Description
An RNA of 177 nucleotides, treated with 2A3 and DMS and read out base by base.

[RMDB]
RNA sequence: GGGAACGACUCGAGUAGAGUCGAAAAGUGCUUGCUAUCGCGGCAAUAUCGCCAGUGGUGCUGUCGUGAUGCGGUCUUCGCAUGGACCGCACAAUGAAGAUACGGUGCUUCUGUAUCGUACUUAUUGCAAUACAAUGUGCUUCGGCACAUUGUAUUGAAAAGAAACAACAACAACAAC
Reactivity to 2A3 in 0.01 (KOAc 150mM, MgCl2 10mM, bicine 150mM(pH8.5), 24C), signal-to-noise 9, nucleotides 027 to 126: g090u060g030c040u140u100g040c040u130a030u110c020g010c000g000g000c000a010a040u050a040u090c050g080c150c100a170g050u190g150g010u020g010c020u010g020u030c010g010u030g030a050u040g000c010g000g000u000c020u090u090c090g050c080a080u160g020g000a010c000c000g030c000a010c000a000a040u200g050a050a020g030a050u010a010c000g000g010u020g030c020u190u100c050u180g020u010a010u010c010g000u010a010c000u040u080a060u060u120g030
Reactivity to DMS in 0.01 (KOAc 150mM, MgCl2 10mM, bicine 150mM(pH8.5), 24C), signal-to-noise 7, nucleotides 027 to 126: g020u000g010c040u000u010g020c080u000a050u010c070g020c030g020g000c020a040a040u010a040u010c060g010c100c130a130g020u020g020g010u000g000c060u000g010u000c020g010u000g000a060u010g010c000g010g000u000c020u000u010c220g010c160a080u010g000g000a030c000c000g020c010a040c070a030a040u020g010a020a040g000a140u000a000c010g010g010u000g010c030u010u020c200u020g030u000a000u000c010g000u000a010c030u000u000a050u000u010g000
DMS adducts were read by reverse transcription with MarathonRT.